Structure probing data (DMS and 2A3) for a 177-nucleotide construct. It was measured as part of the RMDB library OK1LIB. For DMS, 9,088 sequencing reads were counted. The reactions ran in a buffer of 150 mM KOAc, 10 mM MgCl2 and 150 mM bicine (pH 8.5), at 24 C.
[RMDB]
RNA sequence: GGGAACGACUCGAGUAGAGUCGAAAAUGGCUGUGAAAAAUAAUAGGUUCGGUAGAAUGGGCCCUACCGUCCCGAAAAUUCCGUUUAAAGUUAGGUUGGCCUUAUUCCCAAAUAACCCGACCGUAGACCAUGUUAUACAAUUCGUUGUAUAACAUGGAAAAGAAACAACAACAACAAC
Reactivity to DMS in 0.01 (KOAc 150mM, MgCl2 10mM, bicine 150mM(pH8.5), 24C), signal-to-noise 4, nucleotides 027 to 126: u010g020g010c030u000g000u010g000a000a260a110a110a060u030a050a070u000a150g010g000u020u010c000g000g010u010a010g000a030a020u000g020g000g000c080c090c000u000a010c000c000g020u000c040c010c000g000a090a050a090a080u010u020c000c040g010u000u030u030a070a090a120g010u020u030a110g000g020u010u000g000g020c010c030u030u010a090u000u000c020c010c000a010a040a030u010a110a300c050c000c000g000a090c130c120g000u020a060g010a300
Reactivity to 2A3 in 0.01 (KOAc 150mM, MgCl2 10mM, bicine 150mM(pH8.5), 24C), signal-to-noise 9, nucleotides 027 to 126: u100g010g000c010u010g000u030g090a030a020a010a010a040u240a060a090u060a080g010g000u010u010c000g000g000u000a000g010a050a050u060g020g010g010c010c000c000u000a000c000c000g000u010c000c010c000g050a030a020a030a060u140u050c000c020g030u050u080u210a250a230a090g060u110u190a060g020g000u010u010g010g000c000c000u010u020a070u020u000c010c000c000a010a040a000u040a010a010c010c000c010g040a070c040c080g130u090a030g050a050